[RMDB]
RNA sequence: GGGAACGACUCGAGUAGAGUCGAAAAACAACCUCCAGCGGGCCUUGCCCACCCCAUGGGAAGGGGCACCAGGAUGCCUAAGGCCCCAUAGAACUCAGGCCCUUGGCCACAUCCAGCCUCUGGGCUCAGUUACAAUCUGGUUCGCCAGAUUGUAACUAAAAGAAACAACAACAACAAC
Reactivity to 2A3 in 0.01 (KOAc 150mM, MgCl2 10mM, bicine 150mM(pH8.5), 24C), signal-to-noise 2, nucleotides 027 to 126: a010c020a020a080c000c020u030c060c030a030g030c150g000g010g000c000c000u030u060g000c040c020c000a040c050c050c010c020a100u190g000g000g060a050a090g060g000g000g010c030a030c040c010a050g110g000a150u060g000c010c020u070a040a030g020g010c030c030c000c010a040u120a060g060a100a040c060u040c220a040g080g000c000c010c000u050u040g060g030c060c030a110c010a130u060c020c000a000g010c000c020u100c040u050g000g000g000c020u020c050
Reactivity to DMS in 0.01 (KOAc 150mM, MgCl2 10mM, bicine 150mM(pH8.5), 24C), signal-to-noise 3, nucleotides 027 to 126: a080c110a100a120c030c040u010c060c060a070g010c210g010g010g000c010c000u010u010g010c020c000c010a070c090c010c040c180a170u010g000g000g000a140a120g010g010g000g010c020a050c100c090a100g020g010a060u010g000c120c040u020a060a060g020g030c050c020c030c060a110u010a060g020a100a140c140u010c150a100g010g030c020c010c010u010u000g000g020c020c010a050c070a050u010c030c040a220g000c000c020u000c080u000g000g010g000c040u000c090
Source information:
An RNA of 177 nucleotides, treated with 2A3 and DMS and read out base by base. For 2A3, 2,396 sequencing reads were counted. The reactions ran in a buffer of 150 mM KOAc, 10 mM MgCl2 and 150 mM bicine (pH 8.5), at 24 C. Reactivities are rounded to 0.1 and cut off at 0 and 3.